[RMDB]
RNA sequence: GGGAACGACUCGAGUAGAGUCGAAAAAAGAAAAGGCUGGUGCUGGCAGAGAGCCUUCUGCUCCGAUUUGAGGUGUAUGCAUUUUAUGCUGUAAAGCGUGGCCAGUCACAGGAGGAUUCAAAGGCGAGGAGAGAUAUGAUCAAAUCUGCACUUGGGACUCACUAGUGGUAUUCGUACCACUAGUGAGAAAAGAAACAACAACAACAAC
Reactivity to DMS in 0.01 (KOAc 150mM, MgCl2 10mM, bicine 150mM(pH8.5), 24C), signal-to-noise 2, nucleotides 027 to 156: a080a140g030a070a140a070a080g020g000c000u000g000g020u010g010c040u000g010g000c030a070g000a080g000a060g030c010c020u000u000c030u010g010c000u010c040c030g020a170u000u000u000g020a120g030g000u020g040u000a070u000g030c080a090u010u000u000u000a040u010g010c000u000g020u000a060a100a040g000c060g040u000g030g010c000c000a090g020u000c040a040c110a050g010g000a100g010g020a090u000u000c060a030a050a100g060g030c040g020a070g030g010a120g020a090g040a110u000a020u010g010a130u000c070a030a060a120u010c000u000g060c030a110c060u000u010g000g000g000a300
Reactivity to 2A3 in 0.01 (KOAc 150mM, MgCl2 10mM, bicine 150mM(pH8.5), 24C), signal-to-noise 2, nucleotides 027 to 156: a000a000g070a020a060a000a020g010g010c040u030g030g030u130g010c030u050g060g000c010a020g070a010g020a040g110c000c000u040u040c030u070g030c020u020c020c010g090a120u060u070u290g110a040g000g030u040g010u080a050u060g010c010a030u030u180u060u100a060u160g020c030u040g070u110a090a080a020g020c030g040u070g040g000c040c030a020g020u090c040a010c000a050g000g030a010g000g020a030u010u070c060a040a000a040g030g000c020g010a020g050g000a010g000a000g000a010u040a030u270g110a060u070c010a000a090a080u030c040u080g000c030a030c040u050u060g000g000g070a020